[RMDB]
RNA sequence: GGGAACGACUCGAGUAGAGUCGAAAAAACCAUCCAGAGUUGGUCAUUGUUACGGUGUGGGUUUUUCGCUGAGUUCGGCAGGGAAAGUUAUCAAGUGUGAAUUGAUGAAACUGAUAUGGGAUGUCGACUCUAUUUGGUCCUUCGGGACCAAAUAGAGAAAAGAAACAACAACAACAAC
Reactivity to DMS in 0.01 (KOAc 150mM, MgCl2 10mM, bicine 150mM(pH8.5), 24C), signal-to-noise 1, nucleotides 027 to 126: a080a090c050c010a090u020c080c030a080g000a110g020u000u000g020g000u010c110a130u000u000g020u000u010a100c100g010g020u000g030u000g010g000g010u020u010u000u010u020c070g010c070u010g010a050g040u000u000c030g010g000c020a060g020g010g010a060a040a040g000u010u010a040u000c040a060a070g030u010g010u010g010a080a130u000u000g010a030u000g000a050a060a020c060u000g010a090u000a080u000g000g020g010a080u020g000u000c040g010a110